[RMDB]
RNA sequence: GGGAACGACUCGAGUAGAGUCGAAAAAAGCCGGGCGAGGUCUACGUGUAUGCGCAGGAGCUGGACAGCAGCAAGGCGCUGGCGGACCUGCAGACCGAAGCCACGGCGCUGCGCUACAAAAUGCGUAACGGCGUGUCAUCGUCCCUGCGUAACGCCAAUCAUAUUCUGGGUUCGCCCAGAAUAUGAUAAAAGAAACAACAACAACAAC
Reactivity to DMS in 0.01 (KOAc 150mM, MgCl2 10mM, bicine 150mM(pH8.5), 24C), signal-to-noise 1, nucleotides 027 to 156: a020a110g000c080c070g020g020g040c020g060a130g070g070u020c010u000a030c040g010u000g000u030a080u000g010c030g030c000a070g000g060a160g010c000u000g000g030a270c150a150g000c070a090g060c040a180a170g000g020c050g000c010u040g000g080c000g000g000a150c060c000u010g030c040a070g000a140c030c000g000a110a100g020c080c020a010c000g020g000c000g080c010u020g000c050g000c000u020a300c040a130a070a190a000u000g000c020g050u010a010a010c000g000g000c020g040u010g000u000c050a260u000c020g000u010c030c000c000u000g020c090g000u000a100a120c070g000c000c000a200
Reactivity to 2A3 in 0.01 (KOAc 150mM, MgCl2 10mM, bicine 150mM(pH8.5), 24C), signal-to-noise 3, nucleotides 027 to 156: a000a010g070c000c020g010g010g000c030g010a010g010g010u020c060u100a080c050g020u070g070u090a100u240g090c030g000c020a000g060g090a110g070c010u050g040g060a230c040a160g100c000a000g040c030a100a080g110g010c030g000c030u010g060g010c000g010g010a010c000c020u000g000c000a010g020a010c020c010g040a040a020g000c000c000a040c000g030g000c000g000c010u030g000c010g000c000u040a100c130a150a140a090a010u210g010c010g000u000a040a010c030g110g000c000g000u000g060u060c060a070u070c020g020u080c050c040c010u000g020c000g060u080a060a060c020g000c010c000a020

An RNA of 207 nucleotides, treated with DMS and 2A3 and read out base by base. The reactions ran in a buffer of 150 mM KOAc, 10 mM MgCl2 and 150 mM bicine (pH 8.5), at 24 C. Source: RMDB library OK3TST, as collected in RNAgym.